This 207-nucleotide RNA was probed chemically with 2A3.
For 2A3 the reverse transcriptase was SuperScript II with manganese.
Values are in units of 0.01, from 0 to 300, in steps of 10.
Source: RMDB library OK3TST, as collected in RNAgym.
Values cover nucleotides 27 to 156.

[RMDB]
RNA sequence: GGGAACGACUCGAGUAGAGUCGAAAAGGCCGAGGCCGCGGCGUACGGCAGGUGCGUGCAGGCCUCCACGGCCCCGGGCGGCCGCCUGAGUAAGGACUUCUGCGCGCGGGAGUUCGAGGCCCUGCGGAGCUGCUUCGCCGCUGCGGUAGGCCAAGAACCAUGCAUCACUAUUCGUAGUGAUGCAUGGAAAAGAAACAACAACAACAAC
Reactivity to 2A3 in 0.01 (KOAc 150mM, MgCl2 10mM, bicine 150mM(pH8.5), 24C), signal-to-noise 1, nucleotides 027 to 156: g000g000c010c010g010a070g110g000c000c000g000c000g020g020c000g010u090a080c050g030g000c000a000g040g100u150g140c060g050u110g030c020a000g000g040c010c000u000c000c000a000c000g080g000c000c010c010c050g050g170g000c090g000g020c010c030g050c010c030u040g010a040g120u250a010a050g020g020a090c030u100u060c060u220g040c050g000c040g020c030g020g020g000a180g010u070u110c080g000a010g010g010c090c070c020u000g000c020g010g000a060g070c000u000g000c010u050u020c000g000c010c000g020c030u010g000c010g010g040u060a020g000g010c000c000a000a000g000a010a030